[RMDB]
RNA sequence: GGGAACGACUCGAGUAGAGUCGAAAAUUCAGAGCCUUCGGGCUCUGAACCGUUUUCCUUGUUCCCAAUAUUGGUAACUCGGUAAUAAAAGGAAAGUUGCCGCAACUUGUUCGUUCGCGAACAAGAAUUAGCCAGAUAAAUUCGUUUAUCUGGCUAAAAAAGAAACAACAACAACAAC
Reactivity to DMS in 0.01 (KOAc 150mM, MgCl2 10mM, bicine 150mM(pH8.5), 24C), signal-to-noise 3, nucleotides 027 to 126: u000u000c000a010g010a010g000c010c000u000u010c190g050g010g000c000u000c000u010g000a000a020c080c090g010u010u020u000u000c000c040u000u000g010u000u000c000c000c000a170a160u020a080u010u000g010g000u000a020a010c010u010c060g000g000u000a090a090u010a070a100a070a060g010g000a080a080a040g000u000u000g010c000c010g000c300a110a210c010u000u000g000u000u000c000g010u000u010c200g010c020g010a000a000c000a000a010g000a080a110
Reactivity to 2A3 in 0.01 (KOAc 150mM, MgCl2 10mM, bicine 150mM(pH8.5), 24C), signal-to-noise 2, nucleotides 027 to 126: u020u000c000a010g010a010g000c010c020u030u080c210g070g020g010c020u030c000u000g000a000a000c000c020g030u020u020u060u000c020c010u010u060g000u000u000c000c000c000a010a030u280a130u120u170g000g000u010a030a010c010u010c110g000g030u080a130a100u130a200a300a080a020g040g020a150a060a000g040u010u020g020c010c010g000c020a040a130c020u020u020g000u000u010c010g010u010u020c190g000c000g090a000a010c000a010a010g000a000a040